[RMDB]
RNA sequence: GGGAACGACUCGAGUAGAGUCGAAAAUAAUGGCGAAUGGGACCCCAGAUUUCCUUCCUAUUGAGAAGGAAAUAACUGGCACUCCCUUAGCCAUCCGAGUGGACGUUGUCCUCCUUCGGAUGCCCAGUAAGGUCUUCGUUCGCGAAGACCAAAAGAAACAACAACAACAAC
Reactivity to 2A3 in 0.01 (KOAc 150mM, MgCl2 10mM, bicine 150mM(pH8.5), 24C), signal-to-noise 7, nucleotides 027 to 129: u170a010a100u030g010g000c020g040a010a020u030g000g000g000a010c040c110c010c020a000g000a010u000u000u000c000c000u000u000c000c020u120a250u230u300g080a300g000a050a000g030g020a000a000a000u020a010a020c000u000g000g000c010a040c040u010c010c000c010u010u020a020g000c000c000a000u000c000c000g010a040g020u080g000g010a070c280g090u150u280g020u110c020c010u040c010c050u060u050c000g000g010a020u040g050c000c000c000a030g050u080a110a030
Reactivity to DMS in 0.01 (KOAc 150mM, MgCl2 10mM, bicine 150mM(pH8.5), 24C), signal-to-noise 4, nucleotides 027 to 129: u110a140a100u000g000g040c000g020a130a050u010g000g010g060a040c150c300c020c000a000g000a090u030u020u000c000c000u000u010c000c020u060a130u060u140g020a140g000a000a000g000g060a010a010a030u000a060a070c000u000g000g000c160a130c170u020c020c010c020u000u000a180g040c060c000a050u010c010c010g030a000g020u050g000g000a000c080g060u070u000g030u030c000c060u000c030c070u000u000c010g030g000a110u000g020c040c000c030a020g000u040a070a090